An RNA of 207 nucleotides, treated with 2A3 and read out base by base. It was measured as part of the RMDB library ARCHII.
RNA sequence: GGGAACGACUCGAGUAGAGUCGAAAACGCCGCGACUUCCUCUUAUCGAGAGGUAAACAAGGAGCGAGUUUAAAGGCUAGUCAGCUCAGCUGGCAACACCGUCAAAUUGCGGGAACAUCCUAAGAGCUAUCGACCACCAAGCAGGCUGCUGAAAGGCGUCUGGCAUUACGUUCGCGUAAUGCCAGACAAAAGAAACAACAACAACAAC
Reactivity to 2A3 in 0.01 (KOAc 150mM, MgCl2 10mM, bicine 150mM(pH8.5), 24C), signal-to-noise 1, nucleotides 027 to 156: c000g060c060c000g000c000g000a000c000u060u060c040c010u000c010u090u140a080u300c150g100a000g000a000g000g000u060a070a170a080c100a000a080g000g000a070g060c000g040a080g040u060u070u130a050a110a000g000g020c020u040a010g050u040c010a000g000c000u010c110a000g040c010u000g020g000c000a050a020c040a010c060c030g030u050c040a060a230a240u160u220g060c020g010g010g030a020a020c000a010u090c000c030u090a160a100g000a010g000c030u020a040u080c070g020a070c000c040a040c000c030a050a020g050c000a020g070g000c000u040g000c010u030g010a000a080a090g120g040c020